This 177-nucleotide RNA was probed chemically with DMS and 2A3. 2A3 adducts were read by reverse transcription with SuperScript II with manganese. Values cover nucleotides 27 to 126.
RNA sequence: GGGAACGACUCGAGUAGAGUCGAAAAGCAAUGAGAACAGACAUCGAGAUAGGUAAAAGAGACUGUUUGGACUUGCUGACUACAGUUGAUGGUCUGUCAGAAGAACAGUGCAAAAAUAUAGUGAAUGUGAUUGAAGCAUGUUCGCAUGCUUCAAUCAAAAAGAAACAACAACAACAAC
Reactivity to DMS in 0.01 (KOAc 150mM, MgCl2 10mM, bicine 150mM(pH8.5), 24C), signal-to-noise 3, nucleotides 027 to 126: g020c010a060a050u000g010a250g010a110a020c040a000g020a110c080a170u010c020g030a110g010a170u020a200g000g000u010a040a040a100a210g000a070g000a120c000u000g040u000u000u000g010g020a300c120u000u010g040c110u010g010a030c000u010a100c090a090g000u010u020g030a110u020g000g000u000c010u000g000u020c170a080g000a080a040g000a090a040c060a040g020u010g000c110a020a060a010a040a060u050a100u020a120g000u030g000a080a060u020g020
Reactivity to 2A3 in 0.01 (KOAc 150mM, MgCl2 10mM, bicine 150mM(pH8.5), 24C), signal-to-noise 3, nucleotides 027 to 126: g060c030a000a080u110g030a060g050a170a000c060a040g190a070c040a120u040c050g070a030g060a170u150a050g000g130u130a160a120a010a050g030a010g000a020c000u000g020u040u010u010g060g020a050c060u040u030g000c010u000g000a040c020u020a040c070a170g110u130u150g090a200u040g050g090u000c000u000g050u040c070a010g040a100a000g000a100a080c000a020g010u060g060c140a020a090a030a000a000u270a020u170a070g130u120g200a110a080u230g010